[RMDB]
RNA sequence: GGGAACGACUCGAGUAGAGUCGAAAACGUUUGCCAUUUAUCAUCGUUAUUUACUAUCAGUGGUGACAAUGACCUGUCAGAUUGUUGAUUAUUUUUUGGGCUACAGACUAUAAAUCUUCAAGGAUCGAGGAAAAGCAAACAAAUAGGAAAGGAAAAACUAUAAAUAACAUUUCGAUGUUAUUUAUAGAAAAGAAACAACAACAACAAC
Reactivity to DMS in 0.01 (KOAc 150mM, MgCl2 10mM, bicine 150mM(pH8.5), 24C), signal-to-noise 2, nucleotides 027 to 156: c100g020u000u000u010g020c010c040a110u000u010u000a040u010c030a100u010c060g020u000u000a070u020u000u000a200c110u000a130u000c070a110g010u000g010g040u010g000a030c040a010a040u000g000a060c010c090u000g000u010c060a080g010a210u000u010g010u000u020g010a110u000u010a080u000u000u000u000u000u000g020g020g000c040u000a070c080a090g030a080c010u000a060u000a040a050a100u020c070u000u010c030a070a110g010g000a040u000c060g000a120g080g000a030a080a070a060g000c050a030a060a060c080a040a060a030u000a060g000g010a070a030a130g020g020a070a050a140a050a290
Reactivity to 2A3 in 0.01 (KOAc 150mM, MgCl2 10mM, bicine 150mM(pH8.5), 24C), signal-to-noise 2, nucleotides 027 to 156: c040g010u040u010u110g060c000c010a030u020u090u200a090u080c050a040u040c040g020u020u090a080u100u140u130a110c030u060a040u170c120a040g050u020g020g000u020g030a010c020a040a060u040g050a070c020c020u030g070u070c010a060g040a200u030u040g040u020u000g030a100u020u070a070u040u110u010u010u090u090g010g020g000c020u100a050c020a020g020a000c000u000a010u090a200a130a100u050c020u060u020c050a030a010g030g000a050u070c030g010a040g000g000a070a070a020a000g000c010a000a000a160c000a000a080a010u090a020g030g000a090a050a040g000g030a000a040a190a010a000